[RMDB]
Annotation
This 207-nucleotide RNA was probed chemically with DMS and 2A3. The reactions ran in a buffer of 150 mM KOAc, 10 mM MgCl2 and 150 mM bicine (pH 8.5), at 24 C. For DMS the reverse transcriptase was MarathonRT. For 2A3, 2,379 sequencing reads were counted.

RNA sequence: GGGAACGACUCGAGUAGAGUCGAAAAGCCAUGAGUCGCAACGCAAAGCCGCGGCAAGUGGAGUUAGCGAGAAGAGACUAGGCUUUGGUUUCUUCAGGUGAAGCGGUCACCAAUCAGGUGUGGUAGUAGGAGCCUGCAUGGUUCGCCAUGCAGGCAACAGAAUGUAGGGAUUCGUCCCUACAUUCUGAAAAGAAACAACAACAACAAC
Reactivity to DMS in 0.01 (KOAc 150mM, MgCl2 10mM, bicine 150mM(pH8.5), 24C), signal-to-noise 2, nucleotides 027 to 156: g010c010c000a070u000g050a300g040u000c010g000c000a050a110c020g000c040a100a120a250g020c020c010g010c050g020g000c030a030a300g030u010g010g010a120g030u000u000a100g010c070g020a220g020a050a060g000a080g010a050c040u010a050g000g030c080u000u010u020g020g020u000u020u000c020u000u000c060a070g000g030u000g010a100a080g000c030g020g010u000c000a070c030c020a100a190u000c040a100g030g030u000g040u010g000g020u000a090g010u000a110g030g000a100g000c000c010u000g010c020a000u000g000g040u000u000c300g030c030c030a000u010g020c010a000g010g030c010a000a010
Reactivity to 2A3 in 0.01 (KOAc 150mM, MgCl2 10mM, bicine 150mM(pH8.5), 24C), signal-to-noise 3, nucleotides 027 to 156: g040c000c000a030u080g030a010g020u030c000g000c050a070a060c040g070c100a130a180a070g050c060c040g020c040g030g060c080a060a000g030u020g010g050a070g030u070u140a040g020c050g020a070g010a080a040g040a000g020a020c020u030a030g060g090c020u100u050u080g010g000u030u000u010c010u040u040c060a050g000g040u040g030a060a010g040c040g040g070u070c020a020c050c020a020a120u180c070a020g070g010u030g020u050g040g040u040a050g010u020a050g030g180a020g020c000c000u010g000c000a010u000g000g100u010u070c150g050c090c000a000u000g000c000a000g000g010c000a000a010